RNA sequence: GGGAACGACUCGAGUAGAGUCGAAAAACACUACAACGCUAAGGCGAGGAAAUGUUCAUAGUGUAAGGAGAGCGGGAACUGGAAAACGCCUCGCUUUUUUCCUGUAAAACACCGCAACGCAGGAAAAGGACAUCUUUGCAUUCGUGCAAAGAUGUCCAAAAGAAACAACAACAACAAC
Reactivity to 2A3 in 0.01 (KOAc 150mM, MgCl2 10mM, bicine 150mM(pH8.5), 24C), signal-to-noise 1, nucleotides 027 to 126: a000c140a060c060u250a070c040a300a000c010g110c180u100a040a000g000g000c000g000a000g000g000a000a230a000u300g000u050u050c000a040u200a030g080u150g000u000a030a000g090g000a010g080a000g010c000g000g000g000a200a030c000u070g060g000a040a090a000a130c090g030c000c000u000c030g000c000u110u000u000u000u000u000c000c000u000g000u000a000a000a000a170c100a030c000c000g000c020a130a000c230g000c000a000g000g000a000a000a000a100